[RMDB]
RNA sequence: GGGAACGACUCGAGUAGAGUCGAAAAGAACACGUCUCGGGACGCCGCUAAACUCGCCCUGGUCGGGAUGGGUUUAACGACCCCUCGGGUUUCCUAGUUCCUAAAACUAGGUGGUGGAGUCAUAUAAAAAACUUCUACACGUUCGCGUGUAGAAGAAUCUUAUUUUCAUGUUCGCAUGAAAAUAAGAAAAAGAAACAACAACAACAAC
Reactivity to DMS in 0.01 (KOAc 150mM, MgCl2 10mM, bicine 150mM(pH8.5), 24C), signal-to-noise 1, nucleotides 027 to 156: g010a130a100c030a050c030g030u020c060u000c040g040g030g040a090c120g000c020c040g000c030u000a040a030a060c000u000c000g020c010c000c020u010g020g000u000c230g010g020g030a040u000g000g000g000u000u000u000a040a090c010g010a070c000c020c030c010u000c030g000g000g020u010u030u000c050c020u000a040g000u010u000c040c080u000a070a070a030a040c050u000a020g000g010u000g010g040u000g030g000a230g020u000c030a180u030a230u080a010a070a050a150a080a130c000u000u000c000u000a010c000a050c000g000u000u010c300g020c010g000u010g030u000a010g000a010a010g000a050a040
Reactivity to 2A3 in 0.01 (KOAc 150mM, MgCl2 10mM, bicine 150mM(pH8.5), 24C), signal-to-noise 2, nucleotides 027 to 156: g040a090a020c050a010c150g060u050c020u080c110g020g000g050a030c050g100c040c000g050c030u030a050a040a040c020u000c030g030c000c000c020u130g130g090u170c090g010g030g000a100u070g010g000g000u010u010u010a020a010c000g030a020c010c020c030c020u050c020g030g000g010u020u000u010c000c000u000a000g000u000u040c030c020u040a040a060a000a000c020u020a020g000g000u020g050g020u000g030g050a060g050u110c110a040u140a010u300a200a070a020a000a010a030c010u000u030c000u000a000c000a000c010g010u020u030c160g000c000g110u000g030u010a000g000a000a000g000a000a000